[RMDB]
RNA sequence: GGGAACGACUCGAGUAGAGUCGAAAAGAUAUGGACGGUGGUUAUGUAUGCCUGGAACUACUCACUAAGGCAUCGGAAACGAUGCCAAGUGAGCCAGGCAACAAGUACAUAACCACCGUCCUAAGUCCUAAGGUCAGUAGUUCGCUACUGACCUUAGAAAAGAAACAACAACAACAAC
Reactivity to DMS in 0.01 (KOAc 150mM, MgCl2 10mM, bicine 150mM(pH8.5), 24C), signal-to-noise 2, nucleotides 027 to 126: g000a030u000a120u000g010g010a010c020g000g050u000g010g010u000u000a010u010g010u010a120u010g020c030c010u000g000g010a060a050c150u020a300c000u000c000a020c010u010a170a110g030g000c000a000u000c010g010g010a120a030a140c000g010a020u000g000c000c000a010a000g000u000g000a000g010c000c010a000g010g020c010a040a030c240a040a250g000u010a010c000a020u000a000a020c000c000a000c010c000g000u000c000c000u000a000a050g000u010c040

This 177-nucleotide RNA was probed chemically with DMS. Values are in units of 0.01, from 0 to 300, in steps of 10. For DMS, 2,880 sequencing reads were counted.